[RMDB]
RNA sequence: GGGAACGACUCGAGUAGAGUCGAAAAGAUAUGGACCAAUCACAGGGAGCUGGGAUAUCGGAAACGAUAUUCAGCGAAGAACUGUGAGUUGGUCCUAAGUCAAAACGGAAGUCUUCGGACUUCCGAACUAACUCUACUAGUUCGCUAGUAGAGUUAGAAAAGAAACAACAACAACAAC
Reactivity to DMS in 0.01 (KOAc 150mM, MgCl2 10mM, bicine 150mM(pH8.5), 24C), signal-to-noise 5, nucleotides 027 to 126: g010a040u000a300u010g000g010a020c000c010a040a050u000c000a020c000a020g010g000g000a120g020c000u000g010g010g010a010u000a000u000c000g010g000a130a110a160c010g000a010u000a010u000u000c000a030g010c010g000a080a100g000a120a220c010u000g010u000g000a040g020u010u000g010g010u000c000c000u000a010a080g010u000c040a080a060a110a210c030g010g000a020a000g010u000c010u010u020c230g030g000a020c000u000u000c000c000g000a010a080
Reactivity to 2A3 in 0.01 (KOAc 150mM, MgCl2 10mM, bicine 150mM(pH8.5), 24C), signal-to-noise 4, nucleotides 027 to 126: g030a000u070a040u160g000g010a000c000c010a010a050u020c000a000c010a010g070g070g080a100g020c010u090g100g150g110a020u010a000u010c020g010g020a070a040a020c010g000a000u000a000u020u000c000a000g000c010g060a100a010g050a090a080c010u000g000u020g040a050g090u020u030g000g000u000c000c000u000a010a000g010u000c030a030a020a080a120c030g010g010a000a010g000u000c010u090u230c300g100g010a000c000u010u000c000c000g000a010a000